This 207-nucleotide RNA was probed chemically with 2A3 and DMS.
DMS adducts were read by reverse transcription with MarathonRT.
Source: RMDB library OK3TST, as collected in RNAgym.
The 2A3 profile rests on 2,380 reads.
Conditions: 150 mM KOAc, 10 mM MgCl2 and 150 mM bicine (pH 8.5), 24 C.
RNA sequence: GGGAACGACUCGAGUAGAGUCGAAAAACUACGGUGUGCCUGAAUCUGACAUGCGUUUUGACCAAGGAACAGGCGUCACGACCUUUGAACAGGGCAAGGAACUUCCACCAGACUUCAAGUUCGGCCUCGUCGUGGAUAUUGUCGAUGGCAAGAAAGCCGACUGAGCUAAAUUCGUUUAGCUCAGUCGAAAAGAAACAACAACAACAAC
Reactivity to 2A3 in 0.01 (KOAc 150mM, MgCl2 10mM, bicine 150mM(pH8.5), 24C), signal-to-noise 4, nucleotides 027 to 156: a000c070u130a040c060g020g000u060g010u040g020c000c010u050g040a060a090u090c030u030g040a040c040a100u180g030c090g080u050u060u080u180g120a100c030c060a050a050g060g000a040a010c010a030g030g000c000g030u010c010a010c010g070a080c000c030u080u050u210g050a060a020c050a070g000g000g030c020a050a040g080g000a040a060c020u090u030c030c020a080c010c020a090g050a140c050u060u040c100a050a030g020u030u040c010g020g020c020c010u020c030g030u000c000g000u040g030g030a060u060a060u150u100g000u000c030g040a050u070g030g000c000a010a090g060a060a070a010g080c040
Reactivity to DMS in 0.01 (KOAc 150mM, MgCl2 10mM, bicine 150mM(pH8.5), 24C), signal-to-noise 2, nucleotides 027 to 156: a110c040u000a080c040g010g040u000g040u040g020c000c020u000g020a070a110u010c050u010g000a160c030a030u010g000c100g000u000u000u030u010g020a160c040c000a180a250g000g000a070a120c060a110g010g000c070g010u000c040a030c070g010a050c040c030u000u000u000g000a110a110c130a090g020g000g010c020a070a120g050g020a050a040c050u000u000c020c020a150c050c050a140g010a040c050u010u000c050a040a060g010u000u000c040g000g020c010c000u000c070g000u050c020g000u010g020g010a110u000a060u010u000g000u000c000g010a170u000g000g000c000a050a110g020a060a130a120g010c080